[RMDB]
RNA sequence: GGGAACGACUCGAGUAGAGUCGAAAAUGAUCUAAGAUCAAAGGGAGAGAGGUGUCUGUGGAUCUGAGGCUCCCCAGUGCAGCCUCCCUGUUUGGGGAGUGGAGGGUGGAGUUAAGGGUGGUCUCGAAACUGACAUUGCACACCCCACUUAGCAUUCCACCACCAAUUCAUUCGUGAAUUGGUGGUGAAAAGAAACAACAACAACAAC
Reactivity to 2A3 in 0.01 (KOAc 150mM, MgCl2 10mM, bicine 150mM(pH8.5), 24C), signal-to-noise 2, nucleotides 027 to 156: u080g030a010u000c020u090a020a010g020a050u110c070a090a070a070g010g010g000a100g000a000g000a020g020g030u010g030u010c020u020g040u020g040g040a050u040c120u130g020a020g020g010c000u100c000c010c000c000a040g030u080g160c050a030g120c000c020u010c000c000c000u090g080u050u140u120g050g000g000g020a030g000u180g010g020a050g020g060g010u080g050g110a120g000u110u140a040a060g000g000g030u040g030g000u010c020u000c060g060a020a010a030c020u060g030a000c010a050u010u140g020c080a040c000a020c010c000c010c010a010c040u020u010a000g030c040a080u100u080c030
Chemical mapping of a 207-nucleotide RNA with 2A3. The data come from the RNA Mapping Database (RMDB), library OK3TST. Reactivities are given for positions 27 through 156.